The record gives the reactivity of an RNA of 177 nucleotides to 2A3 and DMS. 2A3 is a SHAPE reagent: it acylates the 2'-hydroxyl of flexible nucleotides of all four kinds. DMS (dimethyl sulfate) methylates the pairing face of unpaired adenines and cytosines. Conditions: 150 mM KOAc, 10 mM MgCl2 and 150 mM bicine (pH 8.5), 24 C. DMS adducts were read by reverse transcription with MarathonRT.

[RMDB]
RNA sequence: GGGAACGACUCGAGUAGAGUCGAAAAGCGCGGAGGUGUAGCGAUAGGACAGCAGCGUUUUCACCAGGAAGGUGAUCUGGGUGGCCGAGCGCGCAUCCACGCGCAUGACCGGGAUGCGGAAGCCUUCACAAUGCAGUCAGUUCGCUGACUGCAUUGUAAAAGAAACAACAACAACAAC
Reactivity to 2A3 in 0.01 (KOAc 150mM, MgCl2 10mM, bicine 150mM(pH8.5), 24C), signal-to-noise 1, nucleotides 027 to 126: g000c020g000c040g000g020a080g000g000u030g010u070a120g080c030g070a130u070a040g030g040a020c020a040g050c000a000g040c130g140u170u010u000u040c000a000c010c020a020g300g230a280a120g010g010u000g000a040u000c020u010g270g050g110u010g100g000c000c020g020a060g080c020g000c000g000c000a000u080c020c010a020c000g050c000g000c040a070u080g050a020c010c060g030g010g020a060u100g040c000g040g010a050a020g040c010c020u040u080c040
Reactivity to DMS in 0.01 (KOAc 150mM, MgCl2 10mM, bicine 150mM(pH8.5), 24C), signal-to-noise 2, nucleotides 027 to 126: g010c020g010c030g000g000a300g050g010u000g010u000a070g040c010g000a160u000a140g010g000a030c050a020g000c010a050g030c300g000u000u000u000u000c010a060c000c010a250g060g000a090a140g010g030u000g000a030u000c000u010g000g000g000u000g000g000c000c000g010a100g000c020g000c000g000c000a020u010c010c190a090c030g020c010g010c010a030u000g000a120c050c000g000g010g000a070u010g000c020g010g040a070a120g000c030c070u000u000c110